[RMDB]
RNA sequence: GGGAACGACUCGAGUAGAGUCGAAAAAGCACAUCAGGAAGAUAAUACACCAUGAUGAAGGGGGUUUUAUGCCAGGGAUGAAAGGAUGGUUUAGUAUAUGCAACUUAAUAAACAUGAUACAUCACAUAAACACAAUUAAAGACAAAAAUCAUAUAAACCUAGCUAUUAAUUUCGAUUAAUAGCUAGGAAAAGAAACAACAACAACAAC
Reactivity to DMS in 0.01 (KOAc 150mM, MgCl2 10mM, bicine 150mM(pH8.5), 24C), signal-to-noise 2, nucleotides 027 to 156: a060g000c020a060c030a140u000c060a120g000g010a070a050g010a200u000a110a190u000a110c030a110c030c010a150u000g020a160u000g010a140a140g000g000g070g040g030u000u000u000u000a060u010g060c080c020a100g000g030g030a090u000g020a090a080a050g030g000a040u000g020g020u000u000u000a080g040u000a090u000a070u000g000c020a070a070c080u000u000a000a090u030a080a060a080c080a060u000g000a130u010a070c060a080u000c090a040c050a110u000a040a070a130c080a090c050a040a060u010u020a050a100a050g020a110c050a000a040a100a060a090u010c020a070u000a090u000a110a080a230
Reactivity to 2A3 in 0.01 (KOAc 150mM, MgCl2 10mM, bicine 150mM(pH8.5), 24C), signal-to-noise 2, nucleotides 027 to 156: a000g090c070a020c040a060u100c040a010g090g020a020a000g010a030u110a140a000u070a110c010a020c010c050a100u040g010a070u040g010a110a080g010g010g000g000g040u000u040u060u170a010u100g000c000c000a010g030g000g000a020u040g070a040a020a040g010g000a030u010g030g000u000u080u050a020g010u020a020u000a010u140g030c030a010a050c070u040u080a060a050u050a070a140a020c010a010u110g040a030u090a060c020a030u090c020a020c000a060u120a090a150a030c070a030c000a040a090u210u120a200a040a000g000a030c030a000a100a080a000a010u050c070a010u210a010u190a140a020a000